[RMDB]
RNA sequence: GGGAACGACUCGAGUAGAGUCGAAAAGGCUUAUUCAGUCUGAACCUGAGGGUUGGAGGUUACUUUACUGGAUGCAGUUUGCUCAUCCUCGCUCCGAUCACAGCAGUAUUGAAUUAGGAUUGAGCUAGGUAAUGCUACGGUUCGCCGUAGCAUUACCAAAAGAAACAACAACAACAAC
Reactivity to 2A3 in 0.01 (KOAc 150mM, MgCl2 10mM, bicine 150mM(pH8.5), 24C), signal-to-noise 3, nucleotides 027 to 126: g060g010c020u070u060a010u070u050c000a010g010u000c030u010g020a150a130c020c030u040g000a240g140g030g020u030u060g000g040a020g000g060u150u060a100c060u180u210u090a040c060u090g040g010a020u020g030c030a050g080u140u250u180g150c040u020c010a020u000c000c000u010c000g050c000u030c010c000g040a020u040c010a020c000a020g080c040a040g030u130a040u070u060g030a060a060u030u040a080g020g100a070u050u120g030a040g010c030u040a050
Reactivity to DMS in 0.01 (KOAc 150mM, MgCl2 10mM, bicine 150mM(pH8.5), 24C), signal-to-noise 3, nucleotides 027 to 126: g000g010c010u000u000a050u010u000c020a040g000u020c020u000g010a200a120c190c030u000g000a130g010g010g020u010u010g010g020a040g010g000u000u000a080c210u000u000u000a090c140u000g010g020a050u010g010c100a080g010u010u010u000g020c090u020c020a030u000c010c000u000c180g000c020u000c010c010g000a000u000c010a050c080a050g010c070a090g000u010a070u000u000g010a060a030u000u000a110g000g000a110u000u000g000a050g030c040u010a070
This 177-nucleotide RNA was probed chemically with 2A3 and DMS. DMS adducts were read by reverse transcription with MarathonRT. 2A3 adducts were read by reverse transcription with SuperScript II with manganese. It was measured as part of the RMDB library OK2TST. The reactions ran in a buffer of 150 mM KOAc, 10 mM MgCl2 and 150 mM bicine (pH 8.5), at 24 C. The 2A3 profile rests on 1,940 reads.